[RMDB]
RNA sequence: GGGAACGACUCGAGUAGAGUCGAAAAUGUGGUGAGCCGCCCACGAAGUUGAACUAGAAAUUUAGCCCACUUUACACAAGAAGGGCGGGCGGAGGCGCGUUUGAGCCCUGGGGACGGGGCGAGCGAGUUUAUAUUGGGGCUUCGGCCCCAAUAUAAAAAAAGAAACAACAACAACAAC
Reactivity to 2A3 in 0.01 (KOAc 150mM, MgCl2 10mM, bicine 150mM(pH8.5), 24C), signal-to-noise 1, nucleotides 027 to 126: u140g000u090g030g050u070g030a000g040c010c000g000c000c000c000a050c040g070a050a030g080u140u170g040a070a080c090u040a050g120a070a230a100u110u150u060a010g020c000c020c010a040c020u000u040u300a140c140a010c040a030a000g080a070a060g050g000g040c010g000g010g000c000g000g010a010g000g050c040g000c000g010u000u180u080g040a020g060c000c000c000u000g000g000g000g000a070c060g000g000g000g000c000g010a000g020c030g020a020g000
Reactivity to DMS in 0.01 (KOAc 150mM, MgCl2 10mM, bicine 150mM(pH8.5), 24C), signal-to-noise 4, nucleotides 027 to 126: u040g010u030g010g030u020g000a110g020c000c010g010c020c010c010a190c140g010a050a090g000u000u000g020a090a300c130u010a070g010a090a110a160u010u000u020a210g000c030c010c030a140c050u000u010u020a180c230a150c230a030a040g020a110a050g030g000g020c050g010g000g000c040g000g010a060g010g010c030g010c020g000u030u010u020g000a190g010c020c010c020u010g020g010g040g000a120c060g020g010g010g030c000g010a020g020c060g020a130g000
An RNA of 177 nucleotides, treated with 2A3 and DMS and read out base by base. The 2A3 profile rests on 435 reads. The data come from the RNA Mapping Database (RMDB), library RFM100. The DMS profile rests on 4,832 reads.